Source information:
An RNA of 177 nucleotides, treated with 2A3 and DMS and read out base by base. The data come from the RNA Mapping Database (RMDB), library OK2TST. The 2A3 profile rests on 12,658 reads. Conditions: 150 mM KOAc, 10 mM MgCl2 and 150 mM bicine (pH 8.5), 24 C.
RNA sequence: GGGAACGACUCGAGUAGAGUCGAAAAAGCGGGCUCCACUUCCACACCCUCUGUGAACAGAACGUGGACGCCCUGGAGACGGUGCUCCAGGCCUUUGAAGAGCGGUUUGGCGAGUUCGUGCCCCGCACGUGUGUAGAAUGUUCGCAUUCUACACACGAAAAGAAACAACAACAACAAC
Reactivity to 2A3 in 0.01 (KOAc 150mM, MgCl2 10mM, bicine 150mM(pH8.5), 24C), signal-to-noise 7, nucleotides 027 to 126: a010g070c030g020g010g010c010u020c030c010a020c020u070u000c010c000a020c000a020c030c050c000u010c030u040g130u040g110a130a020c030a110g080a130a040c090g100u070g050g020a060c060g030c020c010c000u010g030g010a020g000a020c130g100g140u170g030c010u010c000c000a020g030g020c010c020u180u110u120g130a110a030g020a020g060c110g020g010u010u030u040g060g020c090g010a020g000u040u090c030g000u030g020c040c010c000c000g010c000a050
Reactivity to DMS in 0.01 (KOAc 150mM, MgCl2 10mM, bicine 150mM(pH8.5), 24C), signal-to-noise 4, nucleotides 027 to 126: a090g010c040g000g000g020c030u000c010c080a100c090u000u000c000c010a050c050a050c050c100c060u010c040u000g000u010g000a110a150c130a070g000a050a090c130g020u000g000g000a060c090g000c150c020c010u000g000g000a050g000a150c110g010g010u000g010c010u000c000c010a030g000g000c050c040u000u000u000g010a130a050g010a070g000c120g020g000u000u000u000g000g000c130g000a040g000u000u000c050g020u000g010c140c040c000c070g010c070a130